[RMDB]
RNA sequence: GGGAACGACUCGAGUAGAGUCGAAAAACGAGCGGACUACGGUCCGCUCGAACCUGACAGACCUAUCGGAGGUCUGACACUUGCCACGACAGGAGCACAAAAUGAGACUAGGCUACGGCCUAGUCAAAUCCUCGUAGCGCUUCGGCGCUACGAGGAUAAAAGAAACAACAACAACAAC
Reactivity to 2A3 in 0.01 (KOAc 150mM, MgCl2 10mM, bicine 150mM(pH8.5), 24C), signal-to-noise 1, nucleotides 027 to 126: a000c000g000a000g000c000g020g050a000c000u050a050c220g240g000u020c000c000g000c000u000c000g000a000a000c000c000u000g000a000c000a000g030a000c000c050u090a080u300c080g290g170a010g050g010u050c010u010g000a000c000a060c000u060u100g050c020c120a130c030g080a110c020a160g000g010a000g040c080a000c010a110a000a000a010u300g000a190g000a090c000u000a000g030g050c000u000a000c110g080g000c000c020u000a000g000u000c000a000a020